Conditions: 150 mM KOAc, 10 mM MgCl2 and 150 mM bicine (pH 8.5), 24 C. Structure probing data (2A3 and DMS) for a 177-nucleotide construct.
[RMDB]
RNA sequence: GGGAACGACUCGAGUAGAGUCGAAAAGAUCUGUAAAGCCUACGAGUCGACCAGUAGGCUUACGCACACGCAUACUCUUCGAAGUAUGGUCUUCGGACGGUCGACUUCGUGUGCGAGCAGAUCGAAAGGGUGAGAGGGCCUUCGGGUUCUCUCACCCAAAAGAAACAACAACAACAAC
Reactivity to 2A3 in 0.01 (KOAc 150mM, MgCl2 10mM, bicine 150mM(pH8.5), 24C), signal-to-noise 5, nucleotides 027 to 126: g010a000u010c000u000g020u060a120a030a000g000c000c000u000a010c010g060a030g080u060c060g070a130c020c030a020g010u020a010g020g000c000u000u010a010c010g020c000a010c000a010c020g060c010a000u010a040c010u030c050u170u270c100g030a040a010g010u030a060u130g090g000u020c010u040u030c050g110g020a030c050g040g050u070c030g050a090c050u090u070c020g000u000g010u000g000c010g000a000g000c000a000g000a010u000c000g020a060a020a000
Reactivity to DMS in 0.01 (KOAc 150mM, MgCl2 10mM, bicine 150mM(pH8.5), 24C), signal-to-noise 4, nucleotides 027 to 126: g020a000u010c000u020g010u000a080a070a110g000c000c010u000a000c000g020a070g010u040c130g010a020c120c050a160g010u000a020g000g000c020u000u030a020c100g020c000a020c010a020c010g000c160a030u000a000c010u000c150u010u040c180g010a080a000g000u000a050u000g010g020u000c000u000u020c090g000g000a030c060g000g010u010c130g000a050c130u050u030c030g020u000g010u000g000c000g010a300g000c000a040g000a010u000c000g000a070a040a070
2A3 is a SHAPE reagent: it acylates the 2'-hydroxyl of flexible nucleotides of all four kinds. For DMS the reverse transcriptase was MarathonRT. Source: RMDB library OK1LIB, as collected in RNAgym.